[RMDB]
RNA sequence: GGGAACGACUCGAGUAGAGUCGAAAAGGUGGAGCCUGCGGUUUAAUUGGAUUCAACGCCGGGAAGCUUACCGGGAUCGACAGUUGUAUGAAGGCCAGGCUGAAGACCUUGCCGGACUAGCUGAGAGGUAUGUAUCAGUAUUCGUACUGAUACAUACAAAAGAAACAACAACAACAAC
Reactivity to 2A3 in 0.01 (KOAc 150mM, MgCl2 10mM, bicine 150mM(pH8.5), 24C), signal-to-noise 9, nucleotides 027 to 126: g040g000u030g040g040a020g050c000c010u050g040c060g040g080u030u070u100a080a090u110u120g100g040a060u100u080c050a050a010c050g010c030c010g000g000g030a070a020g030c030u050u040a040c010c000g010g010g020a070u090c040g060a050c030a040g010u040u040g130u130a080u080g050a040a010g010g000c010c020a000g010g000c030u060g070a100a010g030a040c000c000u000u010g000c000c000g000g020a020c020u030a020g020c020u030g040a050g010a030g230
Reactivity to DMS in 0.01 (KOAc 150mM, MgCl2 10mM, bicine 150mM(pH8.5), 24C), signal-to-noise 9, nucleotides 027 to 126: g010g020u000g000g010a070g010c020c010u000g010c080g010g010u010u010u010a090a130u010u010g010g010a180u010u010c050a050a070c130g010c020c010g000g000g020a100a110g010c120u010u010a070c020c010g000g000g010a090u020c090g000a120c080a060g010u000u000g010u010a030u010g010a300a130g000g010c030c110a030g000g000c020u010g010a110a080g010a120c020c010u000u000g000c040c010g000g010a190c130u000a050g010c030u000g000a130g010a100g010
The data come from the RNA Mapping Database (RMDB), libraries RFM100 and RFMREP. The record gives the reactivity of an RNA of 177 nucleotides to 2A3 and DMS. The reactions ran in a buffer of 150 mM KOAc, 10 mM MgCl2 and 150 mM bicine (pH 8.5), at 24 C.